[RMDB]
RNA sequence: GGGAACGACUCGAGUAGAGUCGAAAAAGGACUUACUUAAAGGUAAAAUACCACGAUUGGGAGUAUCGUUCAAUGCCGAAGGUGGUAUUAUGGACGGAAUGACUGCCAUGGGCAUGUACGGCGGAAACAUGCAGGUUGGCGGAGAGGCUGGGCGUGACUUCUCCGUUUAUUUCGAUAAACGGAGAAGAAAAGAAACAACAACAACAAC
Reactivity to DMS in 0.01 (KOAc 150mM, MgCl2 10mM, bicine 150mM(pH8.5), 24C), signal-to-noise 1, nucleotides 027 to 156: a140g000g050a170c050u000u000a090c030u010u000a050a110a130g000g000u000a030a050a100a030u000a130c000c000a060c090g020a170u000u000g000g040g030a120g000u010a100u000c020g020u010u000c080a080a030u000g030c000c000g000a140a110g010g080u000g000g000u000a020u000u000a100u010g080g010a070c050g000g000a070a100u020g000a060c020u010g060c040c020a110u000g000g000g010c010a020u000g000u000a050c040g020g030c060g000g000a130a190a050c020a040u000g020c000a050g000g030u010u000g020g000c050g000g000a040g010a110g020g050c070u000g010g010g000c040g030u000g020a140
Reactivity to 2A3 in 0.01 (KOAc 150mM, MgCl2 10mM, bicine 150mM(pH8.5), 24C), signal-to-noise 3, nucleotides 027 to 156: a000g060g020a040c020u040u040a020c050u100u170a180a070a040g040g010u080a060a190a030a030u140a100c040c040a060c110g140a150u070u060g010g000g020a010g040u040a070u170c010g000u000u020c030a080a050u060g010c020c020g060a110a070g180g120u200g020g000u060a050u030u060a050u060g070g000a000c030g060g050a050a110u150g070a040c000u040g040c030c000a050u060g020g020g010c010a000u050g050u060a050c050g030g070c000g010g000a030a050a000c030a000u090g000c000a020g030g080u050u050g020g000c000g020g000a040g000a000g030g000c010u010g000g030g000c010g010u010g020a000